[RMDB]
RNA sequence: GGGAACGACUCGAGUAGAGUCGAAAAGAUAUGGAGCGUGAUAGACAUGCCUGGCAUCGGAAACGAUGUCAGCAGGCAACAGCUAUACGCUCCUAAGUCAAAACAUGAGGGGUUCGCCCCUCAUGAAUCACAGUCAGAUGUUCGCAUCUGACUGUGAAAAAGAAACAACAACAACAAC
Reactivity to 2A3 in 0.01 (KOAc 150mM, MgCl2 10mM, bicine 150mM(pH8.5), 24C), signal-to-noise 2, nucleotides 027 to 126: g000a010u040a030u080g000g010a000g000c020g000u160g300a110u010a000g050a070c240a290u300g050c020c000u000g010g000c000a000u000c010g000g000a030a010a000c010g000a000u000g030u000c020a040g020c010a000g040g000c040a280a110c090a300g000c010u000a010u000a010c000g000c000u000c000c000u000a000a000g000u010c000a000a070a060a070c010a010u020g000a000g060g050g040g010u070u170c210g270c000c000c000c000u000c000a000u010g010a000a020
Reactivity to DMS in 0.01 (KOAc 150mM, MgCl2 10mM, bicine 150mM(pH8.5), 24C), signal-to-noise 2, nucleotides 027 to 126: g010a020u000a050u000g000g000a030g010c000g000u000g020a000u000a000g000a050c090a220u000g030c040c000u000g010g020c000a010u000c020g000g020a000a010a070c000g020a010u000g010u010c210a120g020c300a050g000g000c040a190a100c170a220g010c000u010a010u000a010c000g000c000u000c000c000u000a000a050g000u000c000a170a080a180a250c010a000u000g010a010g030g000g020g000u010u010c300g000c000c000c000c000u000c000a000u000g000a070a090

This 177-nucleotide RNA was probed chemically with 2A3 and DMS. DMS adducts were read by reverse transcription with MarathonRT. 2A3 adducts were read by reverse transcription with SuperScript II with manganese. The data come from the RNA Mapping Database (RMDB), library TTRDES.